[RMDB]
RNA sequence: GGGAACGACUCGAGUAGAGUCGAAAAAGCCGCAACCAGGGCAUCAAGAGGAACGUCAACCAUCCCGACUUCAACGCCAUAAUCAAGGCAAUUCUCAAUUCGGAUCGGGAAUGUUAAAUGUUUCAUUCCGUCAUAGGUUCCGUCAUUCAGAAUUUCAUACUAUGCGUUUAUUCGUAAACGCAUAGUAAAAAGAAACAACAACAACAAC
Reactivity to 2A3 in 0.01 (KOAc 150mM, MgCl2 10mM, bicine 150mM(pH8.5), 24C), signal-to-noise 4, nucleotides 027 to 156: a000g040c010c000g000c020a020a030c030c020a060g040g030g000c030a050u070c050a100a050g060a040g050g060a060a030c020g070u060c050a020a030c020c010a050u020c010c010c000g030a060c050u100u080c090a100a050c080g010c010c010a070u120a290a080u170c120a180a020g010g000c000a000a030u070u010c040u010c020a010a050u120u070c020g040g020a050u020c010g000g010g060a010a020u000g000u010u060a090a200a100u180g050u030u060u030c010a010u100u010c000c010g020u030c060a090u100a170g000g080u090u000c020c000g050u070c050a070u070u020c000a010g060a080a030u050u060u070c010a010
Reactivity to DMS in 0.01 (KOAc 150mM, MgCl2 10mM, bicine 150mM(pH8.5), 24C), signal-to-noise 3, nucleotides 027 to 156: a110g010c030c010g010c080a100a190c030c020a130g030g010g000c030a070u000c100a020a110g010a130g010g000a060a030c060g020u000c040a050a090c090c060a160u000c030c000c000g010a090c050u000u000c080a050a100c080g010c010c040a130u000a080a120u000c130a100a100g000g000c050a090a100u000u010c030u000c040a060a170u000u000c080g000g020a020u000c030g010g010g020a020a030u000g000u000u000a060a070a190u000g020u000u000u000c000a120u000u020c050c000g000u010c040a110u000a070g010g020u010u000c010c000g020u000c070a060u000u010c030a040g010a070a070u000u020u000c030a260

Source information
The record gives the reactivity of an RNA of 207 nucleotides to 2A3 and DMS. The reactions ran in a buffer of 150 mM KOAc, 10 mM MgCl2 and 150 mM bicine (pH 8.5), at 24 C. DMS (dimethyl sulfate) methylates the pairing face of unpaired adenines and cytosines. For 2A3 the reverse transcriptase was SuperScript II with manganese.